[RMDB]
RNA sequence: GGGAACGACUCGAGUAGAGUCGAAAAUCAACAUUAGAAUCAAGAUUACGAAGCAUAGACAGGUGCCUGGUUUUAAGGUUUUCUGUCCAAUGAUACCCUAAGACCCAGCAGAACAUGUGGAAUCACGAAUCGCAUAAGCAUUCGUGCUUAUGCGAUUAAAAGAAACAACAACAACAAC
Reactivity to 2A3 in 0.01 (KOAc 150mM, MgCl2 10mM, bicine 150mM(pH8.5), 24C), signal-to-noise 2, nucleotides 027 to 126: u050c010a010a060c050a110u160u150a050g090a100a040u120c110a100a060g010a050u040u050a040c050g060a040a000g000c020a030u040a030g040a020c030a010g010g050u060g000c020c010u060g030g150u100u080u050u170a000a000g010g000u160u020u010u000c000u030g060u030c040c000a030a000u040g000a000u100a060c000c010c000u010a030a020g010a030c020c000c010a000g000c020a000g050a130a070c040a030u050g020u040g030g030a090a060u070c020a020c110g100
Reactivity to DMS in 0.01 (KOAc 150mM, MgCl2 10mM, bicine 150mM(pH8.5), 24C), signal-to-noise 4, nucleotides 027 to 126: u000c080a070a080c120a090u010u010a090g010a100a050u020c060a090a100g000a120u010u000a070c100g000a080a110g000c040a050u000a060g000a050c060a020g000g000u000g010c010c030u000g010g010u000u000u010u020a050a040g010g010u000u010u010u000c010u010g010u010c050c100a090a060u010g010a060u000a060c040c030c030u000a070a050g000a070c010c020c050a070g000c070a080g010a040a080c110a070u000g020u000g010g000a110a060u000c040a080c150g010